[RMDB]
RNA sequence: GGGAACGACUCGAGUAGAGUCGAAAAGACGCACUAGACUUAGGAUCUAGCGCCAUUGGCGUGGGGGUUCGACUCCCUUCAUCCGCACCAUUUUUGUUUGAUAUACAUAUAUAAAUUGUGGGUGCAAGGUAUAGCAUACCUUCGGGUAUGCUAUACCAAAAGAAACAACAACAACAAC
Reactivity to 2A3 in 0.01 (KOAc 150mM, MgCl2 10mM, bicine 150mM(pH8.5), 24C), signal-to-noise 7, nucleotides 027 to 126: g020a000c050g010c060a060c050u040a030g040a060c030u160u170a110g050g090a130u030c010u020a030g000c000g010c010c020a300u130u300g020g000c020g020u050g020g170g010g000g000u050u060c040g110a090c050u050c000c010c000u000u080c020a030u000c010c020g010c010a040c050c050a110u020u040u020u020u070g110u090u070u110g120a060u090a010u090a230c040a000u110a000u040a000u040a120a110a090u140u060g040u030g070g020g010u040g030c060a040a040
Reactivity to DMS in 0.01 (KOAc 150mM, MgCl2 10mM, bicine 150mM(pH8.5), 24C), signal-to-noise 4, nucleotides 027 to 126: g010a130c080g020c080a090c060u010a000g000a040c050u010u010a170g010g000a140u000c010u010a210g020c030g000c000c050a080u030u030g040g010c020g010u000g010g000g010g010g000u000u010c080g000a160c170u000c030c010c000u010u010c050a020u010c050c020g020c000a020c130c050a110u000u000u000u000u000g010u000u000u010g000a200u060a080u030a070c050a040u020a070u030a070u030a070a040a080u010u000g010u000g000g020g010u000g010c080a060a080